[RMDB]
RNA sequence: GGGAACGACUCGAGUAGAGUCGAAAACAGAUCACUUGAGCUCAGGUGUUCAAGACCAGCCUGGGCAACAUGGCUAAGUCCUGUCUCUGCAAAAAAUACCAAAAACUGAGCUGGAUAUGGUAGCACACACCUGUGGUCCCAGCUACUUGGGAGGCUAGUUUUAAUGCUACUUCGGUAGCAUUAAAACAAAAGAAACAACAACAACAAC
Reactivity to 2A3 in 0.01 (KOAc 150mM, MgCl2 10mM, bicine 150mM(pH8.5), 24C), signal-to-noise 3, nucleotides 027 to 156: c040a020g060a080u100c040a020c090u090u080g070a020g000c020u010c040a010g000g000u040g030u140u080c180a160a020g070a090c030c010a000g020c010c000u010g000g030g000c040a020a020c010a010u060g020g000c030u050a110a010g000u020c000c000u090g090u120c000u000c000u050g050c040a040a020a030a030a040a110u210a150c050c050a090a060a030a080a150c070u100g010a000g000c010u010g040g000a040u050a070u120g050g000u060a020g020c030a030c000a010c000a000c120c020u040g000u020g060g010u060c000c000c000a000g000c010u070a100c020u070u030g020g000g000a020g030g010c010u040a030
Reactivity to DMS in 0.01 (KOAc 150mM, MgCl2 10mM, bicine 150mM(pH8.5), 24C), signal-to-noise 1, nucleotides 027 to 156: c030a040g050a110u000c040a070c000u000u000g010a300g010c040u000c010a050g050g020u000g030u020u000c050a060a060g030a030c060c010a200g020c030c000u000g020g010g020c070a030a050c040a120u000g040g030c000u000a070a110g000u000c010c000u000g000u000c020u000c020u050g000c000a000a010a080a100a080a100u010a150c010c060a090a050a080a090a080c080u000g030a030g010c010u000g010g000a120u000a070u010g000g000u000a050g020c040a130c000a040c050a040c030c030u000g030u010g000g010u000c000c010c020a070g000c010u000a020c060u020u020g020g020g000a130g040g010c050u020a110